[RMDB]
RNA sequence: GGGAACGACUCGAGUAGAGUCGAAAAGCUCGGUGACCCAUUGUAAAGGUGGGUCCGACCGACCUCUUGUCGCAAAUCAACAAGAAAUUGAUUAACCUGUACGAUGGUUGAGCCCUCGCUUCGCGGGUCAAGGUACCGUCUUCGGGCGGUGCCUUGAAAAAGAAACAACAACAACAAC
Reactivity to DMS in 0.01 (KOAc 150mM, MgCl2 10mM, bicine 150mM(pH8.5), 24C), signal-to-noise 9, nucleotides 027 to 126: g000c150u000c030g010g010u010g000a030c010c000c000a010u000u000g010u040a070a090a130g000g020u000g000g000g000u000c010c130g000a050c020c010g000a040c130c040u010c030u000u010g000u000c050g010c170a090a070a070u010c060a050a020c060a060a060g010a060a090a150u010u010g000a060u010u000a070a000c020c010u010g000u020a080c100g000a050u010g000g000u000u010g000a000g010c020c010c010u000c050g000c070u010u010c070g000c060g000g000g010
Reactivity to 2A3 in 0.01 (KOAc 150mM, MgCl2 10mM, bicine 150mM(pH8.5), 24C), signal-to-noise 7, nucleotides 027 to 126: g030c040u010c010g000g020u030g030a020c000c000c000a010u020u070g160u220a140a060a040g070g000u000g000g000g000u000c000c000g020a010c000c000g020a010c000c010u010c000u000u050g050u030c030g010c090a040a060a100u060c010a010a060c010a050a040g080a090a100a020u050u050g010a020u050u050a030a010c000c010u030g040u080a030c040g040a060u090g010g030u030u020g010a000g000c000c000c010u010c010g020c020u050u040c050g000c010g010g020g000